This 207-nucleotide RNA was probed chemically with 2A3.
The 2A3 profile rests on 923 reads.
The RNA was probed in 150 mM KOAc, 10 mM MgCl2 and 150 mM bicine (pH 8.5) at 24 C.
The data come from the RNA Mapping Database (RMDB), library OK3TST.
RNA sequence: GGGAACGACUCGAGUAGAGUCGAAAACUCACUCACUACGGUGAGUGAGAAUCUUAAGGCUCAAUAAAGCUUGCCUUGAGGUCCCUCAAGCAGAUAUAGACUGAAACAUUUAGUAUCUUCAAGCAGGGAGCAACGGCUCGAGUACGCUCGAGCCGAAGAUCAUGGGCAUGUUCGCAUGCCCAUGAUCAAAAGAAACAACAACAACAAC
Reactivity to 2A3 in 0.01 (KOAc 150mM, MgCl2 10mM, bicine 150mM(pH8.5), 24C), signal-to-noise 2, nucleotides 027 to 156: c000u030c000a000c000u010c000a010c020u050a030c290g080g000u000g000a000g000u000g000a000g020a020a030u030c000u040u010a030a000g000g000c080u040c130a080a180u210a250a150a050g100c120u110u110g010c000c000u000u010g000a010g010g030u000c010c010c000u010c050a080a040g010c040a000g070a000u050a020u110a100g100a080c080u110g080a180a090a010c030a080u070u070u090a050g010u040a030u020c020u090u040c050a020a060g010c010a030g110g020g050a040g050c010a050a050c000g000g020c000u000c000g020a000g010u060a030c290g000c070u000c000g000a000g000c000c000g000a000a000